[RMDB]
RNA sequence: GGGAACGACUCGAGUAGAGUCGAAAAGAUAUGGAAUCCGACAGGGAGCUUCUCGGAAACGAGCGAGCAUCGAUCUGUCGAUUCCUAAGUCAAAAGUCAUUCCUAUGCUUCGGCAUAGGAAUGACAAGCGUUUAUAUAAGUUCGCUUAUAUAAACGCAAAAGAAACAACAACAACAAC
Reactivity to DMS in 0.01 (KOAc 150mM, MgCl2 10mM, bicine 150mM(pH8.5), 24C), signal-to-noise 4, nucleotides 027 to 126: g010a050u000a300u010g000g010a010a010u000c140c050g010a020c010a010g000g000g000a030g010c000u000u000c000u000c000g000g000a060a080a120c010g000a010g000c300g010a020g010c000a250u010c140g000a050u010c000u010g000u000c000g000a020u000u000c000c000u000a010a090g000u000c040a050a070a120a110g000u000c000a010u000u000c000c000u000a010u000g000c000u000u010c220g020g000c000a010u000a000g010g000a000a010u000g000a000c000a020a060
Reactivity to 2A3 in 0.01 (KOAc 150mM, MgCl2 10mM, bicine 150mM(pH8.5), 24C), signal-to-noise 4, nucleotides 027 to 126: g010a010u070a040u150g000g030a010a000u050c300c160g000a010c010a010g050g000g020a000g000c000u020u000c000u010c000g000g030a080a050a040c010g010a010g050c200g030a010g010c030a160u300c030g040a090u030c010u000g000u010c000g010a010u000u000c000c000u010a070a010g040u020c040a010a040a070a130g000u000c000a000u000u000c000c000u000a000u000g000c000u060u110c300g140g000c000a000u000a000g000g000a010a000u000g000a000c000a000a000

Source information: The record gives the reactivity of an RNA of 177 nucleotides to DMS and 2A3. Source: RMDB library TTRDEL, as collected in RNAgym. For DMS, 4,954 sequencing reads were counted. The 2A3 profile rests on 12,187 reads. Values cover nucleotides 27 to 126. 2A3 adducts were read by reverse transcription with SuperScript II with manganese.